[RMDB]
RNA sequence: GGGAACGACUCGAGUAGAGUCGAAAAGCGCAGAAGCGCCGGCCAACUACGUGCAAGCAGCCCGCUGUAAAACGUAGGGCGCGAGCGUUGUCCGGAUUUAUUGGGCGUAAAGAGCUCCGUAGGCGGCAAUUAUAUUUUAUUUCGAUAAAGUAUAAUUAAAAGAAACAACAACAACAAC
Reactivity to 2A3 in 0.01 (KOAc 150mM, MgCl2 10mM, bicine 150mM(pH8.5), 24C), signal-to-noise 3, nucleotides 027 to 126: g000c010g000c020a020g040a130a030g010c000g000c010c000g020g030c030c010a020a010c010u020a000c000g020u010g030c040a020a060g000c000a020g000c000c010c010g000c020u010g000u050a020a020a020a020c020g010u040a100g020g000g000c010g000c010g010a000g020c010g010u020u020g020u000c000c000g000g020a020u030u080u020a090u080u090g010g000g000c000g000u010a010a040a010g080a020g000c000u000c010c010g000u010a010g010g000c000g000g000c000
Reactivity to DMS in 0.01 (KOAc 150mM, MgCl2 10mM, bicine 150mM(pH8.5), 24C), signal-to-noise 9, nucleotides 027 to 126: g020c010g020c010a110g010a100a140g010c020g020c010c050g010g010c060c070a070a300c000u000a010c010g010u010g010c230a090a170g000c010a100g010c040c050c110g000c010u000g000u010a080a070a110a060c100g000u000a040g020g000g010c000g010c010g000a140g010c010g000u010u010g000u010c000c000g010g000a150u030u030u020a050u020u020g010g010g000c000g010u030a060a110a160g010a180g010c000u000c010c020g010u000a020g010g000c210g000g000c060